An RNA of 207 nucleotides, treated with 2A3 and read out base by base. The 2A3 profile rests on 1,138 reads. Conditions: 150 mM KOAc, 10 mM MgCl2 and 150 mM bicine (pH 8.5), 24 C. 2A3 is a SHAPE reagent: it acylates the 2'-hydroxyl of flexible nucleotides of all four kinds.
[RMDB]
RNA sequence: GGGAACGACUCGAGUAGAGUCGAAAACUGCCAAACAGCUCAGGAUUAGCAUAAGGUUCUGACAGCUUUGGACAUCGAAUUUACAGAAGAACAUAGUGUCAUCUGCAAAGAGUAGAUGUUUUAAUCGGGGACUGCCUUUUGCCACUCUUACACCAAAGAGUACUACGGAGUUCGCUCCGUAGUACUCAAAAGAAACAACAACAACAAC
Reactivity to 2A3 in 0.01 (KOAc 150mM, MgCl2 10mM, bicine 150mM(pH8.5), 24C), signal-to-noise 3, nucleotides 027 to 156: c070u070g040c040c010a080a040a030c050a090g040c020u010c030a010g020g020a060u080u110a020g050c060a070u040a290a160g030g000u030u000c000u020g080a020c020a040g040c040u090u030u100g020g010a020c020a010u040c040g020a090a050u000u060u040a020c010a020g030a030a010g000a060a020c070a090u240a100g150u230g040u240c010a050u000c000u020g000c100a210a020a010g060a070g010u070a010g010a030u010g050u020u060u000u130a050a110u060c030g000g010g030g020a020c040u070g020c010c010u030u040u030u100g020c030c000a020c020u040c010u070u050a040c070a100c070c040a040a030a060